Chemical mapping of a 177-nucleotide RNA with DMS and 2A3. 2A3 adducts were read by reverse transcription with SuperScript II with manganese. The RNA was probed in 150 mM KOAc, 10 mM MgCl2 and 150 mM bicine (pH 8.5) at 24 C.

RNA sequence: GGGAACGACUCGAGUAGAGUCGAAAAGAUAUGGAGAUAUGACCUCUUUUGACGGAAGCAGUUCGGAAACGAACUGGCUUCCGAUAAGAGGCAUAUCUCCUAAGUCAAACGGCACUUCGGUGCCGAACUUUGUUUAUCUGUUCGCAGAUAAACAAAGAAAAGAAACAACAACAACAAC
Reactivity to DMS in 0.01 (KOAc 150mM, MgCl2 10mM, bicine 150mM(pH8.5), 24C), signal-to-noise 5, nucleotides 027 to 126: g000a050u000a300u000g010g010a020g000a010u000a000u010g010a230c000c000u000c000u000u000u010u000g020a270c100g010g000a020a010g020c020a020g010u000u000c000g000g000a100a110a210c000g010a010a010c000u000g020g010c000u000u000c000c000g020a010u000a010a010g010a020g000g010c000a000u000a010u000c010u000c000c000u000a010a060g010u010c040a090a110a280c020g010g000c000a010c000u000u010c240g020g000u000g010c000c000g000a020a060
Reactivity to 2A3 in 0.01 (KOAc 150mM, MgCl2 10mM, bicine 150mM(pH8.5), 24C), signal-to-noise 4, nucleotides 027 to 126: g020a030u080a080u210g000g000a020g010a010u020a030u120g300a300c010c000u010c050u040u100u120u170g300a160c020g000g000a000a000g010c000a010g010u000u000c000g010g030a050a080a080c000g010a000a000c010u000g040g000c000u000u010c000c000g000a000u000a000a010g000a000g010g010c000a000u000a000u010c000u000c000c000u000a010a000g000u000c010a000a020a120c010g000g000c010a010c010u090u100c300g080g010u030g000c020c000g000a010a000